[RMDB]
RNA sequence: GGGAACGACUCGAGUAGAGUCGAAAAAAGUGCUGACCUGGAUUUCCGGUUCGACCUACAACGCGACCGAUGCGCAGGUCUGGCGCACCGGAAUUGUGAUGGUGAUUUUGCUGGCGAUUACCCCGCACGUAGCCAGUCAGUUCGCUGACUGGCUACGAAAAGAAACAACAACAACAAC
Reactivity to DMS in 0.01 (KOAc 150mM, MgCl2 10mM, bicine 150mM(pH8.5), 24C), signal-to-noise 1, nucleotides 027 to 126: a040a020g030u000g000c040u000g010a040c020c000u000g020g000a070u010u010u000c080c040g030g020u020u000c010g010a130c070c020u000a090c240a100a140c190g010c020g020a120c050c060g000a030u010g000c130g020c030a090g010g000u000c060u020g020g000c020g000c080a050c000c000g020g010a100a050u000u010g010u010g010a110u000g010g000u000g000a130u000u000u000u000g000c080u010g010g010c050g000a030u010u020a160c050c000c050c030g050c120a130
Reactivity to 2A3 in 0.01 (KOAc 150mM, MgCl2 10mM, bicine 150mM(pH8.5), 24C), signal-to-noise 1, nucleotides 027 to 126: a010a010g030u030g000c010u000g010a040c010c000u010g150g000a110u070u070u070c050c000g020g020u060u070c030g090a230c010c000u060a030c070a110a000c070g030c060g010a080c010c000g020a030u140g000c070g000c000a030g000g000u000c040u030g050g010c000g000c000a000c000c000g010g130a110a200u150u080g030u010g060a140u100g030g130u010g050a120u040u130u110u160g070c030u070g060g000c010g040a050u000u060a120c000c000c050c000g000c060a050